RNA sequence: GGGAACGACUCGAGUAGAGUCGAAAAGAUAUGGAGUCCUGUAAACAGCAACAGCCAGCCUCGGAAACGAGGCUGGACAUGCUGUACAUGGACUCCUAAGUCAAACUUCGUAGUUCGCUACGAAGAAGAACUAUACUCAGUUCGCUGAGUAUAGUUCAAAAGAAACAACAACAACAAC
Reactivity to DMS in 0.01 (KOAc 150mM, MgCl2 10mM, bicine 150mM(pH8.5), 24C), signal-to-noise 6, nucleotides 027 to 126: g010a040u010a300u000g010g000a020g020u000c000c010u000g000u000a100a120a100c030a010g020c000a030a120c280a200g000c000c020a000g000c000c000u000c010g000g010a100a100a210c010g010a010g010g030c000u000g000g000a010c040a090u000g000c000u000g000u000a020c030a030u010g030g000a010c000u000c000c000u010a010a070g010u000c040a130a100a300c010u000u000c000g020u000a020g010u000u010c280g020c010u000a010c000g000a010a000g010a120a110
Reactivity to 2A3 in 0.01 (KOAc 150mM, MgCl2 10mM, bicine 150mM(pH8.5), 24C), signal-to-noise 4, nucleotides 027 to 126: g020a020u060a040u130g000g000a000g010u000c010c000u010g050u130a260a300a050c010a020g060c030a020a080c010a210g080c000c000a000g000c010c000u010c010g050g020a070a090a050c010g010a000g000g000c000u010g000g000a000c000a000u040g000c000u000g000u010a010c010a090u200g000g010a000c000u000c000c000u000a010a000g020u000c010a010a050a070c000u000u000c000g000u000a010g020u030u090c300g000c130u000a000c000g010a000a000g000a010a030